[RMDB]
Chemical mapping of a 177-nucleotide RNA with 2A3 and DMS.
DMS adducts were read by reverse transcription with MarathonRT.
Values cover nucleotides 27 to 126.
The RNA was probed in 150 mM KOAc, 10 mM MgCl2 and 150 mM bicine (pH 8.5) at 24 C.
It was measured as part of the RMDB library M2PK50.
RNA sequence: GGGAACGACUCGAGUAGAGUCGAAAAGUCAUUAUGUUCGCAUAAUGACAAAUAUAUGGGACUAUAUAAAACGUGAUAGCCGUCCAAGAUCAUGUAUCGGCAAAAACAGACGAUUCGUCGUCUGUAACCUGGUAACAGGAUUCGUCCUGUUACCAGGAAAAGAAACAACAACAACAAC
Reactivity to 2A3 in 0.01 (KOAc 150mM, MgCl2 10mM, bicine 150mM(pH8.5), 24C), signal-to-noise 4, nucleotides 027 to 126: g000u000c000a010u010u000a000u010g030u020u050c200g000c080a000u000a000a000u010g000a010c010a000a110a010u080a000u010a060u080g050g010g060a050c070u030a010u010a010u060a270a170a040a030c040g040u040g100a090u070a060g020c000c010g010u020c010c040a060a030g090a140u120c050a060u120g070u130a060u100c030g020g030c050a080a020a010a040a000c010a010g000a010c020g000a000u020u060c160g060u010c000g010u010c070u000g000u000a000a040
Reactivity to DMS in 0.01 (KOAc 150mM, MgCl2 10mM, bicine 150mM(pH8.5), 24C), signal-to-noise 3, nucleotides 027 to 126: g010u010c000a020u000u010a000u010g000u000u010c260g020c000a020u000a000a020u000g010a020c010a020a060a070u000a040u000a090u010g000g000g010a130c080u000a050u000a080u000a060a030a110a120c170g000u010g000a060u000a090g020c030c030g000u000c080c040a070a090g000a080u000c080a030u000g000u010a060u010c070g040g000c140a050a040a060a080a050c000a010g000a000c000g020a030u000u010c250g020u000c000g010u000c000u000g000u000a020a060